This 207-nucleotide RNA was probed chemically with 2A3 and DMS. Reactivities are given for positions 27 through 156.

RNA sequence: GGGAACGACUCGAGUAGAGUCGAAAAUCUGCCCUAUGUAAGUGGUGUUGAGAGUUGGGCCCCACGCAAUGGAAACCUGUGAACCUCGUCAGGUCCGGAAGGAAGCAGCGAUAAGCAGUCAUUUUCAUGUGCCGUGGAUACGUCUGGCUUGAGCUAAGUUAUUGCACUUGUUCGCAAGUGCAAUAACAAAAGAAACAACAACAACAAC
Reactivity to 2A3 in 0.01 (KOAc 150mM, MgCl2 10mM, bicine 150mM(pH8.5), 24C), signal-to-noise 2, nucleotides 027 to 156: u040c050u110g090c030c000c000u150a150u170g160u040a120a130g070u090g020g000u040g010u050u100g050a140g000a010g060u000u030g010g020g000c020c000c000c000a010c000g030c000a000a000u010g000g020a020a010a020c010c000u020g000u030g010a030a030c040c060u000c000g050u050c030a010g010g020u020c010c000g080g100a090a140g010g010a000a000g000c010a010g000c000g020a020u010a040a020g000c000a000g000u020c040a010u000u000u000u000c000a000u060g130u060g300c100c060g000u030g000g010a020u030a100c010g010u040c010u000g000g000c000u040u040g010a030g020c050u050a090a050
Reactivity to DMS in 0.01 (KOAc 150mM, MgCl2 10mM, bicine 150mM(pH8.5), 24C), signal-to-noise 1, nucleotides 027 to 156: u000c080u000g000c000c000c030u010a110u000g030u000a040a090g020u010g000g010u000g020u010u000g000a270g000a100g070u010u000g050g010g030c000c150c000c010a110c060g020c020a040a050u000g010g000a090a040a060c100c000u030g000u000g020a180a160c130c240u000c000g000u000c030a300g000g010u000c000c000g000g000a190a150g070g010a050a100g000c020a200g030c030g020a080u000a090a300g000c010a040g000u070c150a180u000u000u000u000c020a050u000g030u000g000c110c070g000u000g010g010a040u000a050c000g000u000c010u010g020g000c010u000u000g010a100g020c040u000a070a300